The record gives the reactivity of an RNA of 177 nucleotides to 2A3 and DMS.
Conditions: 150 mM KOAc, 10 mM MgCl2 and 150 mM bicine (pH 8.5), 24 C.
It was measured as part of the RMDB libraries RFM100 and RFMREP.
For DMS the reverse transcriptase was MarathonRT.
[RMDB]
RNA sequence: GGGAACGACUCGAGUAGAGUCGAAAAGAAAGAAAGAAAGGAAAGCACAGGCAACUGACGGAACGUGGAGCACACCACAUGGGAGCCUGCUGUAAUACGAACUGUCGACCGUCUGGGCAAACCUGAAGAGAUAAGGAUGAUUCGUCAUCCUUAUCUCAAAAGAAACAACAACAACAAC
Reactivity to 2A3 in 0.01 (KOAc 150mM, MgCl2 10mM, bicine 150mM(pH8.5), 24C), signal-to-noise 9, nucleotides 027 to 126: g090a010a040a010g150a040a060a010g110a070a070a020g040g020a180a130a020g000c010a010c000a010g010g000c000a030a020c050u050g010a000c010g000g010a020a010c020g010u020g000g040a020g030c010a010c000a020c020c020a140c090a300u300g040g000g020a060g040c020c060u010g000c020u010g030u140a060a060u070a070c010g010a020a000c010u010g000u020c000g000a020c020c010g000u000c000u010g020g010g000c030a100a090a060c010c010u020g020a050a010
Reactivity to DMS in 0.01 (KOAc 150mM, MgCl2 10mM, bicine 150mM(pH8.5), 24C), signal-to-noise 8, nucleotides 027 to 126: g020a090a110a100g010a080a060a090g020a090a170a060g000g010a050a090a240g010c010a030c010a000g000g000c010a040a050c170u060g000a020c000g000g000a020a240c020g000u000g010g010a120g000c020a050c120a100c010c010a150c270a110u040g010g000g010a140g030c160c140u000g020c030u000g000u000a070a110u040a000c010g000a020a240c030u000g000u000c010g000a030c210c130g000u010c010u010g000g000g020c010a010a050a150c020c000u000g000a090a080